Structure probing data (DMS and 2A3) for a 177-nucleotide construct.
It was measured as part of the RMDB library M2PK90.
RNA sequence: GGGAACGACUCGAGUAGAGUCGAAAAUCUAUCACCAGCCCAUGUUUACGACACGAAUGGGCUGUUGCAAAUUACGUAUAGCUCUUGCAUCAUCGUGUCGAAACGUUCCCAAGCUAUACGCCACAAAGCCGAUUAAUGAAUUCGUUCAUUAAUCGGCAAAAGAAACAACAACAACAAC
Reactivity to DMS in 0.01 (KOAc 150mM, MgCl2 10mM, bicine 150mM(pH8.5), 24C), signal-to-noise 2, nucleotides 027 to 126: u000c030u000a170u020c090a090c060c020a050g040c000c020c000a110u020g020u030u000u000a100c020g010a020c020a010c010g010a010a050u000g000g010g010c000u000g010u000u000g000c190a080a030a070u000u000a130c030g020u010a000u000a000g000c000u000c160u010u000g020c120a100u010c190a070u000c020g000u000g000u000c000g020a040a090a180c070g020u000u000c000c010c000a120a020g010c000u000a020u000a000c020g020c100c170a080c200a040a070a100
Reactivity to 2A3 in 0.01 (KOAc 150mM, MgCl2 10mM, bicine 150mM(pH8.5), 24C), signal-to-noise 2, nucleotides 027 to 126: u000c030u050a100u130c040a030c070c000a000g000c010c030c020a020u030g100u050u170u150a090c010g010a020c040a010c000g030a030a030u050g030g000g000c010u010g000u010u020g010c030a010a080a090u260u090a070c030g000u000a000u010a010g000c010u030c030u170u120g080c050a120u110c000a030u050c140g000u010g010u010c000g010a120a100a010c010g010u010u000c000c020c000a000a000g010c010u000a000u000a000c000g020c010c000a130c020a000a090a000
Reactivities are given for positions 27 through 126.